RNA sequence: GGGAACGACUCGAGUAGAGUCGAAAAGAAAGAAAGAAAGACCUACCGCAGUGCUUGACGGGAGGCGGAGCGGGGAACGAGGCCGUCGGCCAUUUUGUGUCUGCUUCCUGUGGGACGUGGUGGUAAAUGAAUGACGGAGGUUCGCCUCCGUCAUUCAAAAAGAAACAACAACAACAAC
Reactivity to 2A3 in 0.01 (KOAc 150mM, MgCl2 10mM, bicine 150mM(pH8.5), 24C), signal-to-noise 2, nucleotides 027 to 126: g100a020a070a000g180a060a070a020g150a010a060a090g060a010c000c000u060a110c050c030g040c060a140g030u180g110c000u000u110g300a010c000g010g000g000a000g000g000c000g010g030a020g040c060g000g090g040g060a080a010c020g070a130g080g020c080c000g300u250c290g010g000c010c050a090u060u110u040u100g110u040g250u000c000u000g010c000u020u000c030c000u000g010u050g000g000g050a030c060g000u000g000g050u000g000g000u020a100a000a000
Reactivity to DMS in 0.01 (KOAc 150mM, MgCl2 10mM, bicine 150mM(pH8.5), 24C), signal-to-noise 2, nucleotides 027 to 126: g000a100a210a140g010a090a040a090g020a090a100a130g000a050c060c000u020a010c000c020g010c010a090g040u000g000c050u000u070g010a040c010g040g030g000a010g020g060c000g040g020a170g010c040g100g000g000g080a090a030c250g010a130g020g000c020c000g040u010c150g000g030c030c000a080u000u010u040u030g000u030g030u000c000u000g010c030u020u000c000c060u000g070u010g000g030g000a100c030g000u000g040g070u000g000g000u010a010a160a220
Structure probing data (2A3 and DMS) for a 177-nucleotide construct. The RNA was probed in 150 mM KOAc, 10 mM MgCl2 and 150 mM bicine (pH 8.5) at 24 C. For 2A3, 999 sequencing reads were counted. 2A3 adducts were read by reverse transcription with SuperScript II with manganese. The DMS profile rests on 1,870 reads.